Record summary: Chemical mapping of a 207-nucleotide RNA with 2A3. Conditions: 150 mM KOAc, 10 mM MgCl2 and 150 mM bicine (pH 8.5), 24 C. For 2A3 the reverse transcriptase was SuperScript II with manganese. For 2A3, 2,289 sequencing reads were counted.

RNA sequence: GGGAACGACUCGAGUAGAGUCGAAAAGGGGUCUUCGUUUGACGGAGCUUGGAAUGCACCGCCACUGAAGCCUCCACGGUGGAUGGUGCGAGAGAAGCUCCCGAGAAGACGGAGGCACCCAAACUCAUAAUCGCUCCUUCGGGAGCGAUUAUGAGAAGGUCAGUAAUUACUUCGGUAAUUACUGACCAAAAGAAACAACAACAACAAC
Reactivity to 2A3 in 0.01 (KOAc 150mM, MgCl2 10mM, bicine 150mM(pH8.5), 24C), signal-to-noise 3, nucleotides 027 to 156: g010g010g010g000u000c010u000u000c020g040u080u130u150g030a010c010g010g000a020g000c000u040u020g100g120a250a110u300g000c000a010c000c000g000c000c000a000c000u000g040a120a020g020c010c060u070c050c010a020c020g030g010u040g040g090a300u150g000g020u010g010c060g030a060g000a000g010a050a010g000c000u000c020c000c030g030a050g010a040a010g010a000c020g000g000a000g010g040c000a250c000c000c020a050a060a070c000u020c000a000u000a000a000u000c010g000c010u040c010c030u080u150c300g050g000g000a000g020c000g000a000u000u000a000u010g000a000g000a010a000